Background
This 177-nucleotide RNA was probed chemically with 2A3 and DMS. For 2A3 the reverse transcriptase was SuperScript II with manganese. The 2A3 profile rests on 2,353 reads. As a SHAPE reagent, 2A3 marks flexible, mostly unpaired nucleotides at the ribose 2'-OH. Source: RMDB library OK1LIB, as collected in RNAgym. The DMS profile rests on 3,084 reads. Reactivities are given for positions 27 through 126. DMS adducts were read by reverse transcription with MarathonRT.

[RMDB]
RNA sequence: GGGAACGACUCGAGUAGAGUCGAAAAAUGAGAUUGAUCAUGUAGAAAACAACAAGGGAUACAAUAUUUCCGCAUAUCAUGAAAUAUAUUAAGAAAUCCCACCUUAUUAUAUUUCCCCAAUGGAUCCCAAAAGUUUCCUAUUCGUAGGAAACUUUUGAAAAGAAACAACAACAACAAC
Reactivity to 2A3 in 0.01 (KOAc 150mM, MgCl2 10mM, bicine 150mM(pH8.5), 24C), signal-to-noise 4, nucleotides 027 to 126: a010u170g010a050g050a040u090u100g020a020u070c100a030u030g040u050a040g080a090a130a040a050c100a020a030c050a090a140g080g000g010a030u090a130c040a180a090u060a150u140u070u020c020c020g000c040a020u040a040u080c030a020u090g040a000a030a000u020a000u000a000u050u040a030a030g020a060a140a010u000c010c000c000a010c000c000u000u020a020u040u000a010u000a000u020u030u000c010c020c000c000a040a080u090g060g030a070u050c020c020
Reactivity to DMS in 0.01 (KOAc 150mM, MgCl2 10mM, bicine 150mM(pH8.5), 24C), signal-to-noise 2, nucleotides 027 to 126: a060u000g000a100g010a150u020u000g010a080u000c060a020u010g010u010a080g000a070a030a080a090c210a130a100c220a070a090g010g000g000a060u050a060c100a050a100u020a130u000u010u000c040c020g010c040a040u020a010u020c040a040u010g000a080a040a010u010a000u000a010u000u000a000a020g010a100a120a080u010c010c010c000a080c150c020u000u000a020u000u010a000u000a010u000u000u000c000c030c020c040a060a060u020g000g010a050u010c040c090